Chemical mapping of a 207-nucleotide RNA with 2A3. It was measured as part of the RMDB library OK3TST. 2A3 is a SHAPE reagent: it acylates the 2'-hydroxyl of flexible nucleotides of all four kinds.

RNA sequence: GGGAACGACUCGAGUAGAGUCGAAAAAUGAUCGAUCUUGGACCUGUACCUGCGUUCCUGAUCGUCUUCGGGUACGGCAUCAUCCAACGCGACGGGUGACUCUGUGCGCGGCCAGGUGCGCGAGGGAGGCCAAGCAGGAGCAGCGGGAGCGGUCGCACCUUAACGGACAUUUCGAUGUCCGUUAAGGAAAAGAAACAACAACAACAAC
Reactivity to 2A3 in 0.01 (KOAc 150mM, MgCl2 10mM, bicine 150mM(pH8.5), 24C), signal-to-noise 2, nucleotides 027 to 156: a010u220g010a060u130c050g000a020u020c030u050u180g060g010a090c020c040u110g080u220a140c000c000u020g010c000g010u010u060c010c000u010g000a060u060c020g010u020c010u000u010c010g180g020g030u060a080c020g030g000c000a010u020c000a040u070c070c010a160a100c130g070c020g050a020c020g010g010g030u090g030a030c030u000c030u240g090u100g100c060g000c000g040g000c050c030a070g000g040u000g000c070g020c020g040a050g040g000g000a000g000g000c000c010a060a070g030c010a000g000g000a030g010c070a010g020c080g000g000g000a070g050c000g000g020u000c000g010c000a050